[RMDB]
RNA sequence: GGGAACGACUCGAGUAGAGUCGAAAAACUCCAAGAGUGUGUAUGAGAGAUGCUGCAGUUAAAAAGUCCGUAGUCAUAGAAGGGCAAAGAGAGAUGCGAGGUCUCACAGUGCGAUGAUGGAGGAGCCGUUACGUCAUCCGUUCGCGGAUGACGUAACAAAAGAAACAACAACAACAAC
Reactivity to DMS in 0.01 (KOAc 150mM, MgCl2 10mM, bicine 150mM(pH8.5), 24C), signal-to-noise 1, nucleotides 027 to 126: a020c030u000c000c020a030a070g000a070g000u010g070u020g150u030a040u060g010a100g000a030g000a030u000g000c080u020g000c000a000g000u000u000a130a020a180a030a070g010u000c000c080g000u070a260g000u060c170a050u010a240g020a070a200g040g000g000c000a010a060a170g030a240g010a130g010a030u000g010c020g020a040g020g000u000c030u000c040a050c070a060g000u050g000c000g010a020u000g000a300u000g010g010a060g000g020a000g000c020c120
Reactivity to 2A3 in 0.01 (KOAc 150mM, MgCl2 10mM, bicine 150mM(pH8.5), 24C), signal-to-noise 1, nucleotides 027 to 126: a000c000u000c000c000a060a000g040a000g040u190g040u040g000u030a050u000g180a240g000a000g000a010u040g250c020u050g000c010a040g050u210u280a230a110a000a000a000g040u000c010c010g000u040a040g020u060c030a060u090a160g090a120a000g030g000g060c000a000a080a000g040a000g050a000g000a040u020g060c080g030a010g000g040u000c000u000c000a060c000a000g030u050g000c010g020a040u090g000a030u000g130g030a060g040g000a010g040c060c040
This 177-nucleotide RNA was probed chemically with DMS and 2A3. The RNA was probed in 150 mM KOAc, 10 mM MgCl2 and 150 mM bicine (pH 8.5) at 24 C. The 2A3 profile rests on 443 reads. DMS adducts were read by reverse transcription with MarathonRT. Values cover nucleotides 27 to 126. The data come from the RNA Mapping Database (RMDB), library RFM100.